[RMDB]
RNA sequence: GGGAACGACUCGAGUAGAGUCGAAAAGAUAUGGAGGAGGCGUCCCUGGCAACAGCUCGGAAACGAGACAUGCCACCACGCUCCUCCUAAGUCAAAACCAGAGACCACGUUCGCGUGGUCUCUGGAACAGCUGAGAAAAGUUCGCUUUUCUCAGCUGAAAAGAAACAACAACAACAAC
Reactivity to 2A3 in 0.01 (KOAc 150mM, MgCl2 10mM, bicine 150mM(pH8.5), 24C), signal-to-noise 1, nucleotides 027 to 126: g030a010u090a030u160g000g020a000g040g040a100g100g140c020g010u000c000c020c010u020g000g000c000a080a130c040a280g080c010u000c000g030g010a090a090a010c000g010a020g030a000c030a080u090g030c010c000a030c130c020a000c000g000c010u000c000c000u000c000c000u000a050a010g040u030c020a010a010a060a140c000c010a000g030a000g000a010c000c000a030c030g030u140u130c270g040c010g150u000g020g000u020c010u000c000u000g000g000a000a000
Reactivity to DMS in 0.01 (KOAc 150mM, MgCl2 10mM, bicine 150mM(pH8.5), 24C), signal-to-noise 1, nucleotides 027 to 126: g010a020u000a300u020g000g000a050g010g010a020g030g000c060g020u000c120c040c040u000g050g020c020a010a070c240a180g000c010u010c000g010g020a120a060a270c010g000a000g040a020c070a190u000g030c000c020a000c000c070a000c020g000c010u000c000c000u010c000c000u010a020a060g000u000c060a100a070a120a080c000c000a000g000a020g040a020c000c000a030c010g020u000u000c160g010c000g050u010g030g000u000c000u010c000u000g000g000a040a070

This 177-nucleotide RNA was probed chemically with 2A3 and DMS. For DMS, 876 sequencing reads were counted. For 2A3, 1,863 sequencing reads were counted. The reactions ran in a buffer of 150 mM KOAc, 10 mM MgCl2 and 150 mM bicine (pH 8.5), at 24 C. DMS adducts were read by reverse transcription with MarathonRT.